This 177-nucleotide RNA was probed chemically with DMS and 2A3. Reactivities are given for positions 27 through 126. For DMS the reverse transcriptase was MarathonRT. Source: RMDB library RFM100, as collected in RNAgym. Conditions: 150 mM KOAc, 10 mM MgCl2 and 150 mM bicine (pH 8.5), 24 C.
RNA sequence: GGGAACGACUCGAGUAGAGUCGAAAAUCAGUAUGCCCCGAAUGGACCGGGCAACACGCGGGCUACAAUGGCUCUGACAGUGGGAUGCAACGCCGAGAGGCGACGCUAAUCUCCAAACGGAGUCGUAAUAGCACCAGGCUUUCGAGCCUGGUGCUAUAAAAGAAACAACAACAACAAC
Reactivity to DMS in 0.01 (KOAc 150mM, MgCl2 10mM, bicine 150mM(pH8.5), 24C), signal-to-noise 1, nucleotides 027 to 126: u020c300a120g000u000a080u020g000c000c000c000c000g000a260a100u020g000g000a080c120c070g040g060g020c000a130a000c060a000c100g070c080g030g000g010c030u000a010c000a020a090u040g000g000c000u000c000u000g000a030c080a240g000u020g000g010g000a000u000g000c050a000a300c050g000c000c000g000a120g010a260g000g000c000g000a030c160g020c000u030a060a020u000c000u010c030c020a040a140a150c000g000g010a000g050u000c000g000u030a090
Reactivity to 2A3 in 0.01 (KOAc 150mM, MgCl2 10mM, bicine 150mM(pH8.5), 24C), signal-to-noise 1, nucleotides 027 to 126: u040c000a000g050u020a040u120g040c000c000c000c030g110a020a070u080g000g030a060c080c000g010g030g000c000a000a040c070a020c040g050c080g060g000g000c000u000a000c000a060a170u110g020g000c000u000c010u020g020a010c010a040g040u300g060g000g000a010u010g000c000a040a040c000g000c000c000g070a050g000a060g030g000c000g000a000c120g000c000u020a070a010u020c000u000c000c010a050a040a060c020g000g000a000g060u000c000g030u000a000